[RMDB]
RNA sequence: GGGAACGACUCGAGUAGAGUCGAAAACGUCCGAUGCGGAAGUUCGUGCUUCCGUCGAACGCGAAAGUCGGACGGCGGCCAUGAGUCGCAACGCAAAGCCGCGGCAAGUAGAGUUAGCGAGAAGAGAAAAAGUCACGAGUGUUCGCACUCGUGACAACUUAUAUGUAGAGUUCGCUCUACAUAUAAGAAAAGAAACAACAACAACAAC
Reactivity to 2A3 in 0.01 (KOAc 150mM, MgCl2 10mM, bicine 150mM(pH8.5), 24C), signal-to-noise 3, nucleotides 027 to 156: c010g010u000c000c000g000a000u030g010c000g000g020a010a010g020u140u300c140g110u300g070c010u000u000c010c000g000u000c000g020a100a030c060g000c030g110a130a050a000g020u010c000g000g010a010c020g000g010c010g010g000c020c040a210u200g020a040g060u040c010g010c060a070a040c040g010c080a080a050a040g000c030c020g020c020g020g000c050a070a040g030u100a020g060a040g030u090u150a040g040c030g040a040g020a110a040g070a040g020a030a100a030a030a010g000u000c000a000c000g010a000g000u020g030u060u060c160g030c080a000c000u000c000g000u000g000a000c000a000a000
Reactivity to DMS in 0.01 (KOAc 150mM, MgCl2 10mM, bicine 150mM(pH8.5), 24C), signal-to-noise 2, nucleotides 027 to 156: c010g010u000c000c000g020a060u010g050c030g010g010a050a040g010u010u000c210g020u010g020c000u010u000c000c010g030u000c070g000a030a080c100g000c020g010a100a130a110g030u000c010g020g020a040c040g030g020c050g020g000c020c030a150u010g010a190g030u000c010g040c030a040a050c050g000c060a130a130a180g000c010c030g020c000g020g000c030a090a120g020u000a080g000a150g020u000u000a090g020c020g000a070g020a080a110g010a180g020a070a070a040a090a120g010u000c000a000c030g000a020g040u000g010u000u000c290g020c040a050c000u000c000g040u000g010a000c010a020a050